[RMDB]
RNA sequence: GGGAACGACUCGAGUAGAGUCGAAAAACGCCGACGAGCCGAACCUGAUCCGUGUGGGCCGGAUGUUCGACGCAGACAACACGGAAGUAGAAGCGCUCAGAAUCGCCGAUGAAGUCGGGCCGGGCGUGAUCUUCGUGGCCUCCUUUGCUGAAUGCACGUAAAUUCCACAGUUCGCUGUGGAAUUUACAAAAGAAACAACAACAACAAC
Reactivity to 2A3 in 0.01 (KOAc 150mM, MgCl2 10mM, bicine 150mM(pH8.5), 24C), signal-to-noise 1, nucleotides 027 to 156: a000c080g030c000c070g080a060c010g000a040g100c060c030g000a060a070c020c010u050g090a010u000c000c000g000u030g010u010g060g020g010c040c000g110g000a080u050g030u120u170c040g040a050c090g040c040a050g010a140c060a140a000c010a020c020g050g000a010a000g030u070a010g010a150a000g000c000g000c030u000c020a010g100a110a080u030c020g000c050c000g030a040u030g200a110a040g090u110c000g060g000g000c000c030g040g050g000c000g050u030g030a110u030c060u060u010c020g010u130g000g020c030c000u040c010c040u000u040u150g000c040u080g070a140a110u190g000c120a020c130
Conditions: 150 mM KOAc, 10 mM MgCl2 and 150 mM bicine (pH 8.5), 24 C.
Chemical mapping of a 207-nucleotide RNA with 2A3.
2A3 adducts were read by reverse transcription with SuperScript II with manganese.
The 2A3 profile rests on 445 reads.